The data come from the RNA Mapping Database (RMDB), library 15KLIB. Structure probing data (DMS and 2A3) for a 170-nucleotide construct. 2A3 is a SHAPE reagent: it acylates the 2'-hydroxyl of flexible nucleotides of all four kinds. Conditions: 150 mM KOAc, 10 mM MgCl2 and 150 mM bicine (pH 8.5), 24 C. For 2A3, 5,536 sequencing reads were counted. Reactivities are given for positions 27 through 129.
[RMDB]
RNA sequence: GGGAACGACUCGAGUAGAGUCGAAAAUUGACAUUGUCAGGCGGUUAGCAGUAUCACUGUUCCAGCCUAUUACUUAUUUCCAAUUGACUACCUCAUUGGUCUUGGGUAUAGGUUUGUGUGCGUUCCUGGGCCGGGACGUUCGCGUCCCGGAAAAGAAACAACAACAACAAC
Reactivity to DMS in 0.01 (KOAc 150mM, MgCl2 10mM, bicine 150mM(pH8.5), 24C), signal-to-noise 2, nucleotides 027 to 129: u000u000g020a090c040a070u070u040g020u030c060a060g040g020c110g010g010u050u000a050g010c040a110g020u030a000u060c090a070c040u040g010u040u040c080c050a130g000c030c000u030a030u030u070a030c040u010u040a000u000u000u050c010c000a010a050u040u100g050a000c300u210a130c230c090u020c040a050u010u040g020g030u000c030u040u000g010g000g030u030a030u000a010g050g060u000u000u000g020u040g010u050g060c050g000u000u000c000c010u000g000g000g000
Reactivity to 2A3 in 0.01 (KOAc 150mM, MgCl2 10mM, bicine 150mM(pH8.5), 24C), signal-to-noise 2, nucleotides 027 to 129: u120u090g010a000c060a040u050u090g010u140c040a020g020g070c000g020g000u040u060a020g000c010a000g030u030a050u020c050a040c080u040g020u050u020c010c000a020g020c000c010u010a030u020u130a000c010u030u040a010u020u040u010c000c000a020a030u050u140g010a010c040u060a130c100c080u100c020a050u010u050g000g000u000c000u000u010g000g000g000u010a000u000a000g050g000u050u110u160g120u020g020u040g040c000g010u010u000c000c010u050g040g030g000